Source: RMDB library OK1LIB, as collected in RNAgym. Chemical mapping of a 177-nucleotide RNA with 2A3 and DMS. 2A3 adducts were read by reverse transcription with SuperScript II with manganese. The RNA was probed in 150 mM KOAc, 10 mM MgCl2 and 150 mM bicine (pH 8.5) at 24 C. High DMS reactivity at an A or C suggests that its Watson-Crick edge is free.
RNA sequence: GGGAACGACUCGAGUAGAGUCGAAAAGAAGAGAGUCGACGCAAGCGACGAUAACUGCGGAACGGUAACCGUAGUACCGUACGGUCAUGGCACGCGAAAGCGAAAGACCGUAACAUGCCAUAAGAGAGACGAGGCAUAAUUUCGAUUAUGCCUCGUCAAAAGAAACAACAACAACAAC
Reactivity to 2A3 in 0.01 (KOAc 150mM, MgCl2 10mM, bicine 150mM(pH8.5), 24C), signal-to-noise 3, nucleotides 027 to 126: g160a040a020g080a000g020a000g040u050c020g030a070c110g050c150a080a110g060c000g050a020c020g010a030u070a090a040c070u070g020c010g000g010a020a020c040g060g020u040a170a060c000c020g100u070a010g030u000a000c000c020g000u000a010c010g000g000u000c030a050u070g050g000c020a030c050g000c010g070a050a030a030g000c000g040a070a020a000g120a030c000c000g000u010a010a010c010a000u040g010c010c000a040u090a200a050g130a010g020a000
Reactivity to DMS in 0.01 (KOAc 150mM, MgCl2 10mM, bicine 150mM(pH8.5), 24C), signal-to-noise 3, nucleotides 027 to 126: g000a150a060g010a060g030a270g010u020c020g010a070c050g000c280a030a120g010c060g010a010c070g010a100u010a130a160c060u010g000c000g010g000a090a030c040g000g020u010a030a140c000c040g030u010a060g050u000a010c030c010g010u000a050c000g000g000u000c160a040u000g000g010c000a210c030g040c000g000a090a050a050g000c000g000a010a100a100g000a090c000c000g030u000a070a040c120a080u000g000c040c030a010u000a130a090g020a090g000a130